[RMDB]
The record gives the reactivity of an RNA of 177 nucleotides to 2A3 and DMS. The 2A3 profile rests on 561 reads. The reactions ran in a buffer of 150 mM KOAc, 10 mM MgCl2 and 150 mM bicine (pH 8.5), at 24 C.
RNA sequence: GGGAACGACUCGAGUAGAGUCGAAAAUGACAUGUUGGUUCAGAGCCCGAUGAGUCUAAAUCAUAAGAAGCCUCCUACCCCCGGAAUGCAGAGCAGACAGGAUGUAAGAGAUUGGUUGCUGAGUGGGAAAUGAAACCUGGUUCGCCAGGUUUCAUUUAAAAGAAACAACAACAACAAC
Reactivity to 2A3 in 0.01 (KOAc 150mM, MgCl2 10mM, bicine 150mM(pH8.5), 24C), signal-to-noise 2, nucleotides 027 to 126: u070g030a050c040a030u150g010u070u060g070g000u040u150c030a030g010a020g020c030c000c000g020a150u160g000a030g020u070c020u040a090a120a150u070c030a030u020a130a140g060a070a010g010c000c040u010c000c000u120a120c010c010c020c020c000g020g050a050a000u070g010c000a020g030a010g000c040a000g010a040c020a000g070g040a070u070g010u150a080a030g020a020g020a210u130u000g000g020u040u000g000c040u030g040a060g090u100g000g000g020
Reactivity to DMS in 0.01 (KOAc 150mM, MgCl2 10mM, bicine 150mM(pH8.5), 24C), signal-to-noise 3, nucleotides 027 to 126: u030g020a180c160a030u000g000u000u010g000g050u000u010c030a100g000a220g000c030c010c060g000a050u020g000a060g010u000c070u010a050a100a070u020c060a100u010a080a190g020a090a170g000c000c030u000c050c020u010a240c060c040c000c030c070g010g000a080a050u030g000c060a020g000a090g000c030a040g000a070c030a070g020g000a060u010g020u000a060a100g000a050g020a040u010u020g010g000u010u020g030c020u010g000a100g000u000g000g000g040
It was measured as part of the RMDB library OK1LIB. For DMS, 3,410 sequencing reads were counted.